[RMDB]
RNA sequence: GGGAACGACUCGAGUAGAGUCGAAAAACUACACCACCAUCGCGAGAAAGCACCAGCUGGCGCACCUCGCGGACAUCCUGCUGGUCAACCGCAUCCACGCCGCCGUGGUCAACGACACGCAUGAGCGAGGGCCCAUAUAUUUCGAUAUAUGGGCCCUAAAAGAAACAACAACAACAAC
Reactivity to 2A3 in 0.01 (KOAc 150mM, MgCl2 10mM, bicine 150mM(pH8.5), 24C), signal-to-noise 3, nucleotides 027 to 126: a000c060u110a030c030a050c040c010a020c030c000a070u080c060g040c040g000a000g090a060a100a000g050c080a050c020c000a050g140c030u210g020g000c030g000c040a110c020c000u100c050g000c000g010g030a010c020a030u000c000c040u030g060c010u030g010g080u050c050a040a050c040c000g000c000a000u020c020c020a020c060g000c000c000g020c030c020g070u040g000g060u020c050a110a070c080g040a010c010a000c060g040c040a040u180g060a060g090c020g040
Reactivity to DMS in 0.01 (KOAc 150mM, MgCl2 10mM, bicine 150mM(pH8.5), 24C), signal-to-noise 2, nucleotides 027 to 126: a040c140u000a010c100a200c040c000a090c160c000a100u060c020g000c010g010a090g040a180a070a090g050c060a070c000c040a130g030c120u050g020g000c030g010c050a070c100c000u030c070g060c040g000g000a100c050a120u060c000c000u000g000c030u010g050g010u000c120a050a070c090c030g030c060a060u000c050c010a050c000g100c100c040g000c010c000g000u020g000g000u000c000a000a160c090g000a120c070a100c000g000c030a030u010g000a020g050c010g000

The record gives the reactivity of an RNA of 177 nucleotides to 2A3 and DMS. Conditions: 150 mM KOAc, 10 mM MgCl2 and 150 mM bicine (pH 8.5), 24 C. It was measured as part of the RMDB library OK1LIB.